Source: RMDB library M2RFPK, as collected in RNAgym. Structure probing data (2A3 and DMS) for a 207-nucleotide construct. Values are in units of 0.01, from 0 to 300, in steps of 10. DMS adducts were read by reverse transcription with MarathonRT. The DMS profile rests on 2,356 reads. The RNA was probed in 150 mM KOAc, 10 mM MgCl2 and 150 mM bicine (pH 8.5) at 24 C.
[RMDB]
RNA sequence: GGGAACGACUCGAGUAGAGUCGAAAAGACAGCGCCCAACGCUUCGCAACCUGAAAGAAGCGCCUGUUAUCAGGACGGUUGAUCCAUUUACCGGUGCAGACCUCUGCAAACACCGGGUUGCAGAACAUAGAGGGAAAUUUGUUCGCAAAUUUCCCAACAAGAGCUUAAGGUUCGCCUUAAGCUCUUGAAAAGAAACAACAACAACAAC
Reactivity to 2A3 in 0.01 (KOAc 150mM, MgCl2 10mM, bicine 150mM(pH8.5), 24C), signal-to-noise 1, nucleotides 027 to 156: g070a030c050a080g050c030g070c050c010c000a080a010c030g000c000u030u010c000g000c040a010a010c030c010u040g000a000a010a030g000a100a000g020c050g000c010c000u070g010u130u180a140u300c020a000g010g010a020c060g000g000u010u000g030a060u070c000c010a060u030u110u170a110c030c020g040g000u050g060c030a010g100a300c040c020u170c040u100g040c040a130a100a000c010a000c000c000g010g010g000u000u080g040c070a030g090a160a030c050a030u150a080g190a260g040g010g000a000a000a000u010u010u030g020u040u090c090g010c160a000a030a000u000u000u000c020c010c000a000a000
Reactivity to DMS in 0.01 (KOAc 150mM, MgCl2 10mM, bicine 150mM(pH8.5), 24C), signal-to-noise 1, nucleotides 027 to 156: g000a050c040a050g000c100g020c080c020c010a100a030c040g000c010u010u000c000g000c120a090a160c160c040u000g000a120a140a170g010a040a020g040c010g010c020c090u020g010u000u010a120u000c060a010g030g020a060c060g000g000u000u000g020a250u000c040c040a100u010u000u000a130c000c040g020g010u000g030c020a100g010a100c090c040u000c030u000g000c050a130a090a050c010a070c000c000g000g000g000u000u000g000c010a080g030a130a130c100a110u010a100g000a210g030g060g010a010a020a070u000u000u000g000u010u000c270g020c040a000a010a070u000u010u000c000c000c000a040a080